[RMDB]
The record gives the reactivity of an RNA of 207 nucleotides to 2A3.

RNA sequence: GGGAACGACUCGAGUAGAGUCGAAAAAUUGAGCGGACGUUUCGGCCUGCCAUGGCCUCAUCAGUGAGACGGCGUUUCAGUCAGUCUCAUACGUCUGAGCGUGAUACCCGCUCACUGAAGAUGGCCCGGUAGGGCCGAAACGUACUCAAUUGAGGGGCUAAACUGAGCAGUUCGCUGCUCAGUUUAGAAAAGAAACAACAACAACAAC
Reactivity to 2A3 in 0.01 (KOAc 150mM, MgCl2 10mM, bicine 150mM(pH8.5), 24C), signal-to-noise 2, nucleotides 027 to 156: a010u020u020g000a040g050c210g110g250a020c010g000u000u000u010c010g010g000c010c000u000g010c020c020a190u290g000g000c000c000u000c010a010u000c000a010g000u000g000a020g060a120c010g010g040c190g020u000u050u000c020a020g050u010c010a040g110u010c020u010c070a100u220a110c140g100u050c050u020g010a040g140c110g060u020g000a000u030a040c000c000c000g000c000u000c000a000c000u010g000a020a020g040a030u170g010g000c000c000c000g070g020u190a230g020g040g000c000c000g000a000a000a000c000g000u000a000c000u000c000a000a000u000u010g030a120g010g010g000g010